[RMDB]
Structure probing data (2A3 and DMS) for a 177-nucleotide construct. The 2A3 profile rests on 914 reads. For DMS, 1,818 sequencing reads were counted. Values cover nucleotides 27 to 126. Source: RMDB library OK2TST, as collected in RNAgym.

RNA sequence: GGGAACGACUCGAGUAGAGUCGAAAAUUGAUACAGGAGGUAGGUAAACAUGUUCCUCAUAUUGCGAUAGCUGCUUUAUUGUCUGGCGCUGUGUACGCUAGUUUCACCGACAACGUCGUCCGGAGGACAUGCUCCCGCAGUUCGCUGCGGGAGCAUGAAAAGAAACAACAACAACAAC
Reactivity to 2A3 in 0.01 (KOAc 150mM, MgCl2 10mM, bicine 150mM(pH8.5), 24C), signal-to-noise 1, nucleotides 027 to 126: u070u120g030a020u050a110c040a050g000g030a010g010g020u050a010g000g060u080a040a140a040c060a040u110g010u050u050c030c000u010c000a020u050a070u110u130g010c030g010a020u040a070g010c000u000g000c000u140u100u070a140u140u120g070u020c050u020g000g000c030g010c040u080g040u050g040u200a050c000g010c040u010a000g050u000u020u080c050a060c040c000g040a030c000a130a020c040g080u090c020g000u030c010c040g080g000a020g020g000a000
Reactivity to DMS in 0.01 (KOAc 150mM, MgCl2 10mM, bicine 150mM(pH8.5), 24C), signal-to-noise 2, nucleotides 027 to 126: u010u010g010a170u010a090c080a040g010g010a070g000g010u000a090g020g000u000a050a090a090c100a060u000g010u000u000c020c010u000c050a130u010a090u010u010g010c050g000a070u000a120g010c040u000g020c040u000u000u010a100u030u010g000u010c060u010g010g010c030g020c010u000g000u010g010u000a080c020g000c030u000a040g000u010u000u000c120a060c040c040g000a060c070a000a080c130g030u000c070g000u000c070c050g010g000a120g000g000a170